[RMDB]
RNA sequence: GGGAACGACUCGAGUAGAGUCGAAAACGGCUGUCUCAUUUGAUGAUGCACUUGGUGGGGUGAGUCUUUGAGCGACCGACAAGUUUUGGGACAGCAUGCGGAAGUAACCGACACCUCACUGGUUUAGGGGAGCUAUUUAUUUCGAUAAAUAGCUCCCAAAAGAAACAACAACAACAAC
Reactivity to DMS in 0.01 (KOAc 150mM, MgCl2 10mM, bicine 150mM(pH8.5), 24C), signal-to-noise 2, nucleotides 027 to 126: c020g000g000c000u020g000u020c000u030c040a040u020u040u040g000a070u020g040a080u020g040c140a040c040u000u010g030g000u030g000g000g020g000u000g000a080g000u010c080u010u000u040g010a100g020c130g000a190c070c000g020a240c090a080a040g030u040u000u050u030g010g000g000a020c000a000g000c010a010u000g020c090g000g020a060a120g000u040a160a270c050c070g010a260c000a020c000c000u000c000a030c010u000g010g000u000u020u010a090g000
Reactivity to 2A3 in 0.01 (KOAc 150mM, MgCl2 10mM, bicine 150mM(pH8.5), 24C), signal-to-noise 5, nucleotides 027 to 126: c050g030g000c000u000g020u010c020u000c040a090u130u190u210g220a210u040g060a080u240g080c110a040c070u070u140g030g020u030g000g030g000g030u050g050a090g040u030c030u140u110u190g090a100g050c080g040a040c020c000g030a050c020a050a050g040u050u070u210u080g000g000g000a000c010a010g000c000a020u070g040c010g000g040a080a080g060u140a060a090c060c010g020a010c010a000c010c000u040c000a010c010u020g050g040u070u040u170a090g040